[RMDB]
RNA sequence: GGGAACGACUCGAGUAGAGUCGAAAAGAAUGGAAAGGGAUUGUAGAGAUCAGUGUCGCAGCAUUCUCAAUUAGAUUGUAUAUGAGGCCGGGCUUCUGUUACGUGCGACAGAUACUGGUGCGAAGAAGGGAUAUAAAUACUUCGGUAUUUAUAUCCCAAAAGAAACAACAACAACAAC
Reactivity to 2A3 in 0.01 (KOAc 150mM, MgCl2 10mM, bicine 150mM(pH8.5), 24C), signal-to-noise 5, nucleotides 027 to 126: g010a040a060u090g020g040a030a030a060g080g020g030a040u020u150g060u110a050g030a010g010a080u070c050a010g020u030g060u110c040g000c040a010g010c010a040u100u020c030u010c030a070a250u080u080a050g100a180u060u100g070u070a080u030a090u190g050a030g030g000c010c030g060g040g010c110u030u000c010u040g020u020u040a040c050g040u080g050c030g010a000c030a010g000a000u040a040c030u040g020g030u110g130c050g030a050a010g070a090a060
Reactivity to DMS in 0.01 (KOAc 150mM, MgCl2 10mM, bicine 150mM(pH8.5), 24C), signal-to-noise 7, nucleotides 027 to 126: g010a080a090u020g010g000a020a060a060g000g000g000a120u010u010g010u020a070g000a130g010a030u010c030a040g020u010g010u000c010g020c030a090g010c050a080u000u010c050u000c080a070a110u040u020a060g010a110u000u010g000u000a050u020a070u020g000a040g000g000c010c060g020g010g000c050u000u000c010u000g000u010u010a050c100g010u010g000c030g000a020c030a060g000a070u020a060c050u000g000g000u000g000c050g010a080a060g000a120a140